The data come from the RNA Mapping Database (RMDB), library TTRDES. Structure probing data (DMS and 2A3) for a 177-nucleotide construct.
[RMDB]
RNA sequence: GGGAACGACUCGAGUAGAGUCGAAAAGAUAUGGACCGAGAAGGACAACAGCAUGGUUUCGGAAACGAAACGCAUGACAUGUCCCUCGGUCCUAAGUCAAAGGGAUAGUUCUUCGGAACUAUCCCAAUCUUGAUAUUUCGUUCGCGAAAUAUCAAGAAAAAGAAACAACAACAACAAC
Reactivity to DMS in 0.01 (KOAc 150mM, MgCl2 10mM, bicine 150mM(pH8.5), 24C), signal-to-noise 4, nucleotides 027 to 126: g000a000u000a080u010g000g010a020c000c000g000a020g010a240a120g040g010a000c000a180a200c120a180g010c000a020u000g000g010u000u000u000c010g000g000a010a030a050c000g010a010a010a010c000g030c000a010u000g010a020c060a110u010g000u010c000c000c000u000c000g000g000u000c000c000u000a000a050g000u000c020a090a150a180g000g000g000a020u000a010g000u010u010c000u000u020c240g020g010a010a000c000u010a010u000c000c010c000a010a000
Reactivity to 2A3 in 0.01 (KOAc 150mM, MgCl2 10mM, bicine 150mM(pH8.5), 24C), signal-to-noise 3, nucleotides 027 to 126: g000a010u030a000u070g010g010a000c030c050g000a010g040a200a300g090g010a020c140a300a090c090a300g010c010a000u010g000g000u000u010u000c010g000g000a020a010a000c000g010a000a000a000c180g060c090a010u000g020a070c090a300u300g000u000c000c010c000u000c000g010g000u000c000c000u000a000a000g000u000c000a040a100a070g020g000g000a010u010a010g010u020u000c020u020u060c290g060g000a000a010c000u000a000u000c000c000c000a000a000
DMS adducts were read by reverse transcription with MarathonRT.
For 2A3 the reverse transcriptase was SuperScript II with manganese.